[RMDB]
RNA sequence: GGGAACGACUCGAGUAGAGUCGAAAAGGGGUCAUGCUAGGUGGCAAGCAGCCGAUGAAAUACACUGAAGCCUCCACGGUGUAUGGAGGCUGUGCCACCUUGGACCAUGACGGAGGCACCCAAAAUCGUCUGCAUUUGUUCGCAAAUGCAGACGAAAGUUGUUAUAGGACUUCGGUCCUAUAACAACAAAAGAAACAACAACAACAAC
Reactivity to 2A3 in 0.01 (KOAc 150mM, MgCl2 10mM, bicine 150mM(pH8.5), 24C), signal-to-noise 2, nucleotides 027 to 156: g050g010g040g010u040c030a010u100g100c100u130a030g000g010u020g020g000c050a130a120g130c000a010g010c000c000g080a150u030g010a000a010a000u000a010c000a000c000u030g030a070a010g010c010c000u000c000c010a010c010g010g020u000g000u020a000u000g020g000a010g000g010c030u030g000u030g000c000c010a000c000c000u020u070g000g030a000c050c000a010u040g010a010c030g010g000a000g000g000c000a030c000c010c010a030a090a010a120u100c000g000u100c000u010g000c000a000u030u000u000g070u080u050c250g000c170a000a000a000u000g010c000a000g000a000c000g000a000a000a000